[RMDB]
RNA sequence: GGGAACGACUCGAGUAGAGUCGAAAAUCUAUCAAAUUCGUUUGAUAGAAAACCCGCCGUAGGCACCAAGAUCGAGCUACGGACAUCUAACAGUGCAAAUAAACAGCCCCCCAUUCGUGGGGGGCAAGAGUUGUACUUAAUUCGUUAAGUACAACUCAAAAGAAACAACAACAACAAC
Reactivity to DMS in 0.01 (KOAc 150mM, MgCl2 10mM, bicine 150mM(pH8.5), 24C), signal-to-noise 2, nucleotides 027 to 126: u010c010u010a010u020c010a010a010a040u000u000c180g010u010u010u010g010a020u000a000g010a040a070a140a210c000c020c000g040c060c030g010u000a020g030g000c050a030c070c120a120a090g000a070u010c160g010a140g010c010u000a020c030g000g010a140c050a070u010c070u000a050a060c080a100g000u000g000c160a040a130a050u010a060a070a100c190a200g010c000c000c000c020c000c000a020u000u000c140g030u000g030g000g020g000g000g000c010a000a000
Reactivity to 2A3 in 0.01 (KOAc 150mM, MgCl2 10mM, bicine 150mM(pH8.5), 24C), signal-to-noise 1, nucleotides 027 to 126: u020c000u010a010u010c000a010a010a050u070u030c060g010u070u010u000g030a020u040a000g020a060a050a030a040c000c010c050g050c030c030g070u080a080g090g160c100a040c100c030a120a090g020a300u270c060g040a080g020c000u020a010c030g000g070a060c050a120u160c100u060a100a030c010a100g030u110g300c040a040a140a190u210a170a160a020c060a020g000c000c000c000c000c000c000a000u000u000c030g040u010g000g000g000g010g000g000c040a010a000